[RMDB]
An RNA of 177 nucleotides, treated with DMS and 2A3 and read out base by base. The DMS profile rests on 3,906 reads. The data come from the RNA Mapping Database (RMDB), library M2PK50. DMS adducts were read by reverse transcription with MarathonRT. The RNA was probed in 150 mM KOAc, 10 mM MgCl2 and 150 mM bicine (pH 8.5) at 24 C.
RNA sequence: GGGAACGACUCGAGUAGAGUCGAAAAGCUCAACGCUUCGGCGUUGAGCAAAGAAAAUCCGUGCGAAGGGCUGGGUAGGGACGCACGGAAACCCUCCGCCCAAAACUGAGAGGUUCGCCUCUCAGAAGAUUUAUUUGUAGUUCGCUACAAAUAAAUCAAAAGAAACAACAACAACAAC
Reactivity to DMS in 0.01 (KOAc 150mM, MgCl2 10mM, bicine 150mM(pH8.5), 24C), signal-to-noise 3, nucleotides 027 to 126: g000c010u000c000a020a000c000g010c000u000u000c200g030g030c000g020u000u000g010a010g010c010a020a020a100g000a120a040a120a040u000c000c000g000u010g000c010g010a210a180g000g020g000c140u010g000g010g020u010a060g020g000g000a170c040g010c010a010c020g000g000a010a030a070c030c010c000u000c020c020g020c010c020c010a060a040a060a120c010u010g010a010g010a010g000g000u000u010c210g010c000c000u000c000u000c000a000g000a070a080
Reactivity to 2A3 in 0.01 (KOAc 150mM, MgCl2 10mM, bicine 150mM(pH8.5), 24C), signal-to-noise 4, nucleotides 027 to 126: g000c010u000c000a010a010c010g010c020u060u100c260g120g000c010g010u000u000g000a000g020c000a000a010a010g020a010a090a000a030u000c010c010g000u010g000c000g070a110a040g100g070g040c160u190g050g080g110u140a170g080g010g040a010c010g000c000a010c000g000g000a030a020a010c000c000c000u000c010c010g110c000c000c010a030a080a010a030c000u000g000a010g000a000g030g020u040u060c210g040c040c000u000c000u000c000a000g000a010a010